[RMDB]
RNA sequence: GGGAACGACUCGAGUAGAGUCGAAAAUCCUUCCUUUUCGAAGGAAGGACAGUGCACAGUCUUCGCAUCUGUGAUUCACACAACAGCCGUGUCUAUGCGAGGUUUUAAUCAAGUUCGCUUGAUUAAACCCCAUGAUUACUUUCGAGUAAUCAUGGGGAAAAGAAACAACAACAACAAC
Reactivity to 2A3 in 0.01 (KOAc 150mM, MgCl2 10mM, bicine 150mM(pH8.5), 24C), signal-to-noise 6, nucleotides 027 to 126: u010c000c000u010u000c000c000u090u040u030u100c240g130a010a010g010g000a000a000g000g000a010c010a030g060u050g000c010a000c000a020g010u010c050u060u030c090g010c010a020u020c010u030g020u020g040a120u180u180c040a010c000a010c010a200a120c020a090g100c030c020g140u120g040u070c070u110a030u020g000c000g010a010g010g040u020u050u010u060a010a010u010c000a010a010g010u020u050c170g080c110u010u000g000a010u010u000a020a010a020
Reactivity to DMS in 0.01 (KOAc 150mM, MgCl2 10mM, bicine 150mM(pH8.5), 24C), signal-to-noise 5, nucleotides 027 to 126: u010c000c000u000u010c000c000u000u000u000u010c200g010a030a010g000g000a020a010g010g010a010c060a040g000u000g000c020a020c010a020g000u000c060u000u000c020g010c020a030u000c020u000g010u000g000a150u000u000c120a140c020a090c090a080a080c130a080g010c050c030g010u010g010u000c170u000a010u000g010c000g000a030g020g010u010u000u000u000a000a000u000c000a010a010g010u000u010c230g020c000u000u000g000a020u000u000a000a010a090